This 177-nucleotide RNA was probed chemically with DMS. Conditions: 150 mM KOAc, 10 mM MgCl2 and 150 mM bicine (pH 8.5), 24 C. Reactivities are given for positions 27 through 126. The DMS profile rests on 961 reads. For DMS the reverse transcriptase was MarathonRT.
[RMDB]
RNA sequence: GGGAACGACUCGAGUAGAGUCGAAAAGAUAUGGAGUGAAGCAGGGAGUGCCUUCUGUCGAUGAAAUAUCUCGGAAACGAGAUAUGGAGACAGAGUGGGCACGAAGAACUGCUUCACUCCUAAGUCAGACCACUAAAUUCUUCGGAAUUUAGUGGUCAAAAGAAACAACAACAACAAC
Reactivity to DMS in 0.01 (KOAc 150mM, MgCl2 10mM, bicine 150mM(pH8.5), 24C), signal-to-noise 1, nucleotides 027 to 126: g010a150u000a300u010g000g000a000g020u000g020a030a010g000c000a010g000g070g030a060g030u010g000c000c000u010u000c000u000g000u000c000g040a140u000g010a170a100a000u000a010u000c000u000c000g010g000a070a100a210c000g020a030g000a000u000a000u000g000g000a090g030a000c000a030g030a030g020u010g010g000g010c000a020c010g000a070a140g000a230a300c010u000g000c000u000u000c000a000c040u000c000c000u000a020a040g010u010c060a150